[RMDB]
Structure probing data (2A3 and DMS) for a 177-nucleotide construct.
Conditions: 150 mM KOAc, 10 mM MgCl2 and 150 mM bicine (pH 8.5), 24 C.
2A3 adducts were read by reverse transcription with SuperScript II with manganese.
The 2A3 profile rests on 927 reads.
It was measured as part of the RMDB library OK2TST.

RNA sequence: GGGAACGACUCGAGUAGAGUCGAAAAGAAUACGACCUGCGACGCUAUGCUGCGGUGCGCGCAACUAGUCGGCCUCAAAGCGCUUGAAGCCUAUCGAGGUGCUGGACGGUGACGUUCGCGCGGGAUCCCUUUUACCGCCAUUCGUGGCGGUAAAAGGAAAAGAAACAACAACAACAAC
Reactivity to 2A3 in 0.01 (KOAc 150mM, MgCl2 10mM, bicine 150mM(pH8.5), 24C), signal-to-noise 1, nucleotides 027 to 126: g040a020a110u140a110c130g030a030c000c030u040g030c050g030a060c000g070c030u110a010u300g050c020u030g000c060g050g030u060g050c020g000c010g000c010a000a000c010u010a020g040u030c020g020g110c010c000u060c040a110a070a030g040c050g000c000u120u210g100a190a040g020c020c020u100a070u160c060g030a010g050g000u050g080c040u070g010g040a020c030g000g030u030g000a030c020g020u000u010c030g010c000g030c000g040g070g000a050u120c040
Reactivity to DMS in 0.01 (KOAc 150mM, MgCl2 10mM, bicine 150mM(pH8.5), 24C), signal-to-noise 1, nucleotides 027 to 126: g030a100a030u000a080c110g020a110c000c060u000g010c000g030a120c040g030c080u000a060u020g060c000u020g010c070g020g020u010g000c090g000c000g000c030a040a030c020u000a160g000u000c050g000g000c000c000u020c040a070a130a030g000c030g020c110u010u000g000a140a180g050c050c020u000a150u010c140g030a020g000g040u000g010c020u000g000g000a090c030g020g000u000g030a100c090g020u000u010c020g000c000g040c000g020g020g010a180u000c010